[RMDB]
RNA sequence: GGGAACGACUCGAGUAGAGUCGAAAAGGUGCGCGCGGAUCGGCGGCACCUGUUGCCGUUCCGUCGGAGUAGACCAAUCGCAGCGGCAAGUGAGUGGCCGUGCGCCGAAGCAGCCGGUUGGCGAUUGAAACACGCAACCAUUCGUGGUUGCGUGUUUAAAAGAAACAACAACAACAAC
Reactivity to DMS in 0.01 (KOAc 150mM, MgCl2 10mM, bicine 150mM(pH8.5), 24C), signal-to-noise 2, nucleotides 027 to 126: g000g000u010g010c030g010c050g090c000g000g000a040u020c050g000g000c000g010g000c000a140c140c080u030g010u000u000g000c030c000g000u000u000c060c020g010u020c040g040g000a130g020u010a030g000a160c130c040a060a020u000c000g010c010a060g020c040g000g020c000a140a080g040u020g010a240g070u030g010g010c000c000g020u040g020c210g000c000c010g010a140a300g020c040a210g000c010c020g000g000u020u010g000g040c020g020a040u000u000g000
Reactivity to 2A3 in 0.01 (KOAc 150mM, MgCl2 10mM, bicine 150mM(pH8.5), 24C), signal-to-noise 2, nucleotides 027 to 126: g170g020u080g000c110g000c010g040c010g080g030a110u030c010g000g030c000g000g020c030a110c000c030u010g020u020u070g000c000c000g000u030u060c010c010g000u040c070g040g030a100g000u200a030g030a070c000c000a000a000u040c000g000c030a010g030c010g050g010c030a170a160g030u030g020a050g120u160g000g000c000c030g120u160g030c240g030c030c020g000a020a000g020c030a000g010c020c000g090g090u040u090g110g000c000g000a000u000u000g020
This 177-nucleotide RNA was probed chemically with DMS and 2A3. The data come from the RNA Mapping Database (RMDB), library OK1LIB. Reactivities are given for positions 27 through 126. DMS adducts were read by reverse transcription with MarathonRT. For 2A3, 879 sequencing reads were counted.